[RMDB]
RNA sequence: GGGAACGACUCGAGUAGAGUCGAAAACUCAUUCUUCCAAGUGCACAUGCCGGAGUUGACCGUCCAAGUAAAGCAUGCAGGUAGUUCAGAUGACUAUGCAAAGGUGAUCACCUUAUCAGGAGUAGUCCCUAAGUCAGUGUUUGAGACCUAUGAGAACGAUUGUCCUCUGAUUCGUCAGAGGACAAUCAAAAGAAACAACAACAACAAC
Reactivity to DMS in 0.01 (KOAc 150mM, MgCl2 10mM, bicine 150mM(pH8.5), 24C), signal-to-noise 1, nucleotides 027 to 156: c010u000c020a240u000u000c070u020u000c000c010a140a120g010u010g020c090a180c050a020u000g020c050c040g010g060a050g000u000u000g000a060c000c000g030u000c120c070a070a120g000u010a050a040a120g000c090a120u010g010c040a050g050g050u000a030g000u010u020c030a070g050a110u010g000a080c020u000a050u000g000c030a030a010a060g030g030u010g000a050u000c040a140c000c010u010u000a090u000c100a110g040g000a100g050u000a130g010u000c050c030c010u020a080a210g020u000c010a000g010u010g050u000u010u010g000a250g000a110c040c000u000a080u010g000a160g030a090a220c040
Reactivity to 2A3 in 0.01 (KOAc 150mM, MgCl2 10mM, bicine 150mM(pH8.5), 24C), signal-to-noise 2, nucleotides 027 to 156: c020u040c010a090u090u050c060u070u010c010c020a150a140g030u060g050c050a000c010a070u120g000c000c030g020g020a040g000u100u160g040a100c020c000g000u040c010c030a070a010g050u110a160a020a040g010c010a020u090g000c020a010g040g060u040a000g030u000u080c050a020g010a130u100g010a050c040u030a020u210g000c040a100a020a120g070g000u040g040a040u140c040a040c060c020u050u080a080u140c040a020g020g020a070g030u050a000g060u040c050c000c010u050a100a010g020u010c000a000g000u010g040u160u060u090g050a090g030a090c010c010u050a040u120g080a050g040a090a030c050